[RMDB]
RNA sequence: GGGAACGACUCGAGUAGAGUCGAAAAGGCUUCUCCCUCACUAAUUGCUCUGAUUAUUGUGUGAAGUGAAGCACUGGCACGUUUCCGCGAUGUUGUGAUGAAGGUGAAAAGAUCGCUCUUAAUUAGAUAGAGUAACAAUAUUCGUAUUGUUACUCUAAAAAGAAACAACAACAACAAC
Reactivity to 2A3 in 0.01 (KOAc 150mM, MgCl2 10mM, bicine 150mM(pH8.5), 24C), signal-to-noise 9, nucleotides 027 to 126: g040g000c020u020u020c020u040c020c020c000u020c000a020c010u050a060a050u050u090g050c040u030c080u210g110a130u060u110a080u120u100g030u010g020u020g070a040a050g030u030g060a030a000g010c030a100c160u020g030g000c040a020c070g010u000u030u000c010c010g020c030g020a060u090g020u200u020g030u030g040a060u060g050a060a040g060g020u060g030a030a050a050a050g060a050u080c030g030c020u000c010u060u170a180a170u120u050a040g090a150
Reactivity to DMS in 0.01 (KOAc 150mM, MgCl2 10mM, bicine 150mM(pH8.5), 24C), signal-to-noise 9, nucleotides 027 to 126: g010g010c040u000u000c010u000c070c030c030u000c020a030c040u010a040a040u000u010g010c110u020c120u010g000a080u010u010a040u010u010g010u000g010u020g010a060a080g020u010g000a060a070g010c020a070c040u010g000g010c080a130c100g000u000u000u000c020c020g010c100g010a070u010g010u000u000g010u000g000a070u010g010a090a080g000g020u000g000a050a060a080a110g000a070u010c030g010c030u010c040u010u010a070a090u010u010a070g000a260